This 177-nucleotide RNA was probed chemically with 2A3 and DMS. The data come from the RNA Mapping Database (RMDB), library OK2TRN. Values cover nucleotides 27 to 126. The RNA was probed in 150 mM KOAc, 10 mM MgCl2 and 150 mM bicine (pH 8.5) at 24 C. The DMS profile rests on 1,842 reads.

[RMDB]
RNA sequence: GGGAACGACUCGAGUAGAGUCGAAAAGCGUGAUUAGGGAUAAUUAUUAAUCUGUAACCCCGCGAACAGAACAGGGCCCAAUUAUUAACCGGGGCCCAUGGACGAAUUUUAAGUCCGCACACGCGAACAUCAGGUAAUCAUUCGUGAUUACCUGAUGAAAAGAAACAACAACAACAAC
Reactivity to 2A3 in 0.01 (KOAc 150mM, MgCl2 10mM, bicine 150mM(pH8.5), 24C), signal-to-noise 1, nucleotides 027 to 126: g000c000g000u020g040a150u050u180a190g020g000g060a010u040a280a000u220u140a090u130u060a110a090u050c030u050g060u090a140a150c030c000c000c000g000c070g040a050a020c020a030g020a070a040c050a140g010g000g020c000c000c000a060a030u160u120a060u110u130a030a050c020c050g050g000g000g000c000c000c000a000u010g030g000a030c010g000a070a080u000u000u180u210a160a030g030u040c000c000g010c010a040c010a000c030g020c000g010a030a020
Reactivity to DMS in 0.01 (KOAc 150mM, MgCl2 10mM, bicine 150mM(pH8.5), 24C), signal-to-noise 3, nucleotides 027 to 126: g010c020g020u000g010a120u010u010a100g010g000g000a050u000a090a080u020u010a070u020u000a140a070u000c040u000g000u010a060a140c050c050c030c030g000c170g000a100a030c030a070g010a080a170c100a050g000g020g010c010c010c000a100a030u010u010a120u020u010a090a130c230c140g040g020g000g000c000c000c000a010u010g000g010a050c110g010a070a100u030u010u000u010a040a130g000u000c000c010g020c110a060c040a040c040g010c030g010a070a240